An RNA of 177 nucleotides, treated with DMS and 2A3 and read out base by base. The reactions ran in a buffer of 150 mM KOAc, 10 mM MgCl2 and 150 mM bicine (pH 8.5), at 24 C. DMS adducts were read by reverse transcription with MarathonRT.

RNA sequence: GGGAACGACUCGAGUAGAGUCGAAAAGGUGUCGUAAGAAAGGUCAUAAAAAGUGCUAAUAUGAUCUAAAGGAAUAAUAAAGAAAGCACAAGCCUGGAAGUGUGAACUAGGCAAAUCGACGCAAGAAGACAAGUCAGUGAUUCGUCACUGACUUGUCAAAAGAAACAACAACAACAAC
Reactivity to DMS in 0.01 (KOAc 150mM, MgCl2 10mM, bicine 150mM(pH8.5), 24C), signal-to-noise 2, nucleotides 027 to 126: g040g010u000g040u000c040g000u000a080a110g000a060a080a020g000g000u010c000a060u000a010a080a060a120a110g000u010g000c030u030a060a200u050a000u000g000a080u000c000u010a050a090a090g000g050a080a040u030a130a080u040a060a130a140g010a040a060a090g020c000a000c010a120a170g000c000c000u020g000g030a040a050g010u010g010u010g000a090a000c010u000a030g000g030c000a010a060a030u010c040g030a020c000g020c040a120a030g000a110a080
Reactivity to 2A3 in 0.01 (KOAc 150mM, MgCl2 10mM, bicine 150mM(pH8.5), 24C), signal-to-noise 1, nucleotides 027 to 126: g000g000u000g000u000c010g010u040a010a010g060a080a070a000g010g010u030c000a000u040a020a020a020a020a020g090u000g010c000u050a100a040u020a100u080g050a030u000c000u030a000a000a210g210g000a020a160u060a110a000u000a120a130a000g130a160a020a000g010c000a000c040a000a000g010c000c000u000g000g000a000a030g140u130g030u010g300a010a000c000u000a000g040g000c040a020a020a020u010c030g030a000c000g000c020a000a000g090a070a000